[RMDB]
An RNA of 177 nucleotides, treated with DMS and 2A3 and read out base by base.
For DMS the reverse transcriptase was MarathonRT.
Source: RMDB library M2PK90, as collected in RNAgym.
The RNA was probed in 150 mM KOAc, 10 mM MgCl2 and 150 mM bicine (pH 8.5) at 24 C.
The DMS profile rests on 668 reads.
RNA sequence: GGGAACGACUCGAGUAGAGUCGAAAAGCAAAUAAGAUUUAGGGGAAGAAGAUGACAACCUUCUCGCGGUCUUCCCUGUUACGUGUGUAGACACAAUGAAUGUCAUCAUAACUAAAUAUACAAAAAACUUCAAAUACGGUUUCGACCGUAUUUGAAGAAAAGAAACAACAACAACAAC
Reactivity to DMS in 0.01 (KOAc 150mM, MgCl2 10mM, bicine 150mM(pH8.5), 24C), signal-to-noise 1, nucleotides 027 to 126: g020c090a100a060a090u000a060a120g000a250u000u000u020a080g000g020g000g000a010a000g000a110a070g000a020u010g050a040c000a050a050c060c000u000u000c090u010c020g030c190g000g000u000c000u000u000c000c000c000u000g000u000u000a120c270g020u000g030u000g000u010a080g010a040c010a010c020a090a050u000g000a050a060u000g000u000c000a010u000c010a080u020a110a110c090u000a060a030a050u010a070u000a050c020a000a030a220a070a030a020
Reactivity to 2A3 in 0.01 (KOAc 150mM, MgCl2 10mM, bicine 150mM(pH8.5), 24C), signal-to-noise 1, nucleotides 027 to 126: g000c020a000a060a250u230a160a080g040a110u100u110u220a030g070g020g010g010a030a010g010a010a010g000a030u010g000a000c010a000a000c010c000u000u140c060u020c020g000c040g010g030u020c000u000u000c000c000c010u000g020u020u080a070c110g000u000g000u010g090u130a080g140a210c000a010c000a000a040u140g070a030a090u040g010u000c000a000u010c000a030u050a030a000c030u070a020a080a160u290a060u060a140c040a030a180a000a030a060a040